Source: RMDB library ARCHII, as collected in RNAgym. An RNA of 207 nucleotides, treated with DMS and 2A3 and read out base by base. The RNA was probed in 150 mM KOAc, 10 mM MgCl2 and 150 mM bicine (pH 8.5) at 24 C. The 2A3 profile rests on 1,788 reads. For DMS the reverse transcriptase was MarathonRT. 2A3 adducts were read by reverse transcription with SuperScript II with manganese.
RNA sequence: GGGAACGACUCGAGUAGAGUCGAAAACUACGGAUGCCGUUCACAGACUAAAUGGUGGUGGGUCCGGUGGCGCCAGCAGCGCGCGCCGGGCUUAAGAUAUAGUCGGGCCCCUGCCGAAAGGUGGGGGGGGACGCAGAGUCACCGCUCCGUAGGUGAACUCCUUUAUCUAGUUCGCUAGAUAAAGGAGAAAAGAAACAACAACAACAAC
Reactivity to DMS in 0.01 (KOAc 150mM, MgCl2 10mM, bicine 150mM(pH8.5), 24C), signal-to-noise 1, nucleotides 027 to 156: c010u000a010c010g020g000a070u000g050c000c030g020u010u040c040a110c070a020g020a040c080u000a030a080a140u000g030g050u000g000g020u000g000g000g090u000c000c000g000g040u010g000g020c000g060c000c000a240g000c090a300g010c060g050c050g010c010g050c000c020g030g000g000c010u000u000a020a120g010a190u000a180u000a020g000u000c000g020g050g000c030c000c030c000u000g000c010c010g010a110a060a130g030g040u020g010g000g010g000g000g000g010g000a100c040g030c080a300g000a250g040u000c000a070c010c000g000c210u000c040c000g050u000a050g000g020u000g000a050a280
Reactivity to 2A3 in 0.01 (KOAc 150mM, MgCl2 10mM, bicine 150mM(pH8.5), 24C), signal-to-noise 2, nucleotides 027 to 156: c000u010a010c000g000g000a050u170g050c030c030g030u050u110c160a140c020a120g030a020c010u050a090a080a090u110g070g020u100g030g040u050g030g040g000u000c030c030g000g000u040g240g000c020g010c000c040a060g060c080a020g030c120g000c030g000c010g000c080c000g000g000g000c000u010u020a010a010g010a000u100a010u020a100g020u000c000g000g140g010c010c000c000c010u010g020c000c000g070a110a040a040g000g010u030g000g000g000g000g000g000g000g000a020c000g030c130a040g020a040g210u000c010a000c090c030g000c000u000c000c000g000u000a010g000g010u040g020a030a030